Structure probing data (2A3) for a 177-nucleotide construct. It was measured as part of the RMDB library OK1LIB. Conditions: 150 mM KOAc, 10 mM MgCl2 and 150 mM bicine (pH 8.5), 24 C.
RNA sequence: GGGAACGACUCGAGUAGAGUCGAAAAUGAAUAAUCAUAUUUUUCGUGCUAUAUUUGUAUACCCUUCUGCAUAUGCAAACUCCAAGUAUGCACGAACAUGGGGUUGCACAACAAGGCUGCGAAGCCGUGACGACCUGGCAUUCGUGCCAGGUCGUCAAAAAGAAACAACAACAACAAC
Reactivity to 2A3 in 0.01 (KOAc 150mM, MgCl2 10mM, bicine 150mM(pH8.5), 24C), signal-to-noise 1, nucleotides 027 to 126: u160g000a020a070u220a050a080u110c070a080u070a200u210u090u000u000u010c000g000u000g000c030u010a040u030a080u300u160u090g090u090a300u120a190c000c000c000u080u000c030u100g140c040a090u000a090u150g000c000a000a000a000c000u000c000c000a080a080g050u010a010u000g020c000a000c020g000a000a000c000a070u050g000g010g000g000u000u010g030c070a030c000a000a080c060a060a000g100g090c050u080g040c150g070a000a000g000c000c060g000